[RMDB]
RNA sequence: GGGAACGACUCGAGUAGAGUCGAAAACGCUGGGCGUGGACAUGUGAGUUUUUCGACGCGAUAAGAAUCUGAAGCGCGCACGGAUUCUUUUGACGCGUUGUUGAUUUCACAACAGCCACGCCUGUGCUGAAGCGCGCACGGCAACCGAAAGGUGCGACUUCGUUGAUGUGUUCGCACAUCAACGAAGAAAAGAAACAACAACAACAAC
Reactivity to 2A3 in 0.01 (KOAc 150mM, MgCl2 10mM, bicine 150mM(pH8.5), 24C), signal-to-noise 2, nucleotides 027 to 156: c040g000c000u040g000g000g000c010g000u020g000g020a080c080a200u100g000u020g010a090g080u000u030u130u110u210c070g000a000c000g020c030g010a070u030a120a040g040a000a000u000c020u020g060a250a060g030c010g000c000g000c070a020c020g000g000a000u010u010c050u090u070u040u120g150a080c050g000c030g000u010u030g010u040u160g040a090u100u190u050c030a000c010a090a150c000a080g040c000c000a000c000g000c000c000u000g000u010g000c000u040g010a150a000g000c040g000c000g000c000a010c020g030g000c000a060a130c050c000g070a150a020a000g000g000u010g000c030g050a040